[RMDB]
This 177-nucleotide RNA was probed chemically with DMS and 2A3. The DMS profile rests on 3,453 reads.
RNA sequence: GGGAACGACUCGAGUAGAGUCGAAAAGGGAUGGGUGUGUCGAUAUUGUUGGUCGUGCGGUUCUGUGGUUAUGUGUUGUGUUGUAGGCUCUGCACGCAGGCCGCGUAGUCGAGAUUACAUGGACCUGUCUACAAUUCGGUUUCGACCGAAUUGUAGAAAAAGAAACAACAACAACAAC
Reactivity to DMS in 0.01 (KOAc 150mM, MgCl2 10mM, bicine 150mM(pH8.5), 24C), signal-to-noise 1, nucleotides 027 to 126: g010g020g020a060u000g010g020g030u000g030u020g030u010c050g010a060u000a060u000u010g030u000u010g010g010u010c030g030u010g010c060g000g000u000u010c030u000g020u010g020g000u000u000a070u000g030u000g020u000u000g010u000g040u000u010g020u010a110g010g010c070u000c020u000g020c120a090c160g000c010a020g000g020c030c000g000c020g000u000a050g020u010c100g010a090g020a090u010u000a060c090a050u000g010g000a070c030c030u010g000
Reactivity to 2A3 in 0.01 (KOAc 150mM, MgCl2 10mM, bicine 150mM(pH8.5), 24C), signal-to-noise 1, nucleotides 027 to 126: g090g030g040a080u120g030g000g000u100g030u060g050u080c020g070a040u010a040u180u170g060u060u090g050g070u080c050g060u070g040c020g000g040u230u190c020u040g080u080g040g080u150u070a150u210g050u020g070u130u000g000u000g000u050u000g020u000a030g030g010c010u020c000u070g010c030a040c120g020c030a030g000g000c030c000g090c000g000u030a020g020u040c020g040a010g030a210u080u110a030c010a060u050g030g000a140c000c000u070g010

Values are in units of 0.01, from 0 to 300, in steps of 10.